[RMDB]
RNA sequence: GGGAACGACUCGAGUAGAGUCGAAAACACUCAGAGGGAGGAAUCCACUCGGAGAUGAGCAGAGAAAUCACCUCCAGAGGACCCCUUCAGCGAACAAGAGGCGCUUCGAGCGGUAGGAGUAAGACCAGGAUAAGUAAGGGUUCGCCCUUACUUAUCCAAAAGAAACAACAACAACAAC
Reactivity to DMS in 0.01 (KOAc 150mM, MgCl2 10mM, bicine 150mM(pH8.5), 24C), signal-to-noise 2, nucleotides 027 to 126: c130a070c050u000c040a110g010a100g010g000g020a070g000g000a100a140u000c020c010a170c050u010c080g050g000a040g020a010u010g020a050g000c140a200g020a200g000a050a080a120u000c000a030c010c020u000c000c020a050g010a070g000g000a020c050c060c020c000u000u010c000a050g000c050g000a080a100c140a100a060g000a090g000g010c030g000c020u000u010c070g020a090g040c020g000g010u010a050g000g000a050g050u000a070a100g000a160c060c100a100
Reactivity to 2A3 in 0.01 (KOAc 150mM, MgCl2 10mM, bicine 150mM(pH8.5), 24C), signal-to-noise 2, nucleotides 027 to 126: c020a000c010u020c040a030g000a010g030g030g030a130g010g060a090a150u020c040c010a060c050u050c140g000g000a020g010a020u080g000a040g160c150a080g100a020g150a300a180a080u020c010a020c000c020u000c010c000a000g010a020g040g010a020c000c000c000c000u070u000c020a020g030c010g070a030a010c030a160a000g050a060g150g000c030g010c000u020u090c060g040a030g010c010g030g010u040a020g010g050a020g030u050a100a010g020a040c000c040a000